The record gives the reactivity of an RNA of 207 nucleotides to DMS and 2A3. The DMS profile rests on 3,092 reads. 2A3 adducts were read by reverse transcription with SuperScript II with manganese. In probing experiments dimethyl sulfate is read out at A N1 and C N3, which are open when not base-paired. Source: RMDB library M2RFPK, as collected in RNAgym.
RNA sequence: GGGAACGACUCGAGUAGAGUCGAAAAUGUGUCCUAGGGAAUUGAAAGGUCAUCCUUCACAGGAUCGUGUGGAAGUCCUGCUCGGGGCGGAAGCAUUAAAACCAUUCGAGCUAGUCAAUGCGUGGCGUUACCUCCAGGUUCUUCGGAACCUGGAGAACCAAUACGGUUACUUCGGUAACCGUAUUGGAAAAGAAACAACAACAACAAC
Reactivity to DMS in 0.01 (KOAc 150mM, MgCl2 10mM, bicine 150mM(pH8.5), 24C), signal-to-noise 1, nucleotides 027 to 156: u020g010u010g030u000c030c040u000a080g000g000g020a060a110u010u000g000a080a020a020g050g020u010c030a090u010c000c000u030u010c070a060c080a110g010g000a050u000c100g000u000g040u010g030g000a260a160g000u010c010c030u010g010c080u000c090g000g000g010g020c080g000g010a280a180g000c020a030u000u010a050a070a100a080c000c020a120u000u000c000g010a090g030c010u000a130g000u000c040a060a040u000g020c060g010u000g020g020c010g000u010u010a080c120c000u010c000c010a020g000g000u000u000c000u000u020c300g030g000a020a040c000c000u000g000g010a000g000a010a040
Reactivity to 2A3 in 0.01 (KOAc 150mM, MgCl2 10mM, bicine 150mM(pH8.5), 24C), signal-to-noise 3, nucleotides 027 to 156: u130g050u010g020u030c020c010u030a080g010g040g020a090a160u050u160g050a140a110a040g040g010u040c050a050u090c030c000u120u110c070a090c030a030g010g020a030u040c060g000u010g040u040g070g000a020a010g000u010c000c000u030g080c080u060c060g000g000g010g000c020g000g010a030a010g010c020a000u040u170a040a070a000a050c030c000a030u050u080c050g030a010g040c040u050a020g080u090c060a100a120u100g040c040g040u030g050g020c030g060u090u110a050c020c010u010c000c000a020g020g020u000u000c010u050u080c170g120g000a000a000c000c010u000g000g000a000g010a000a000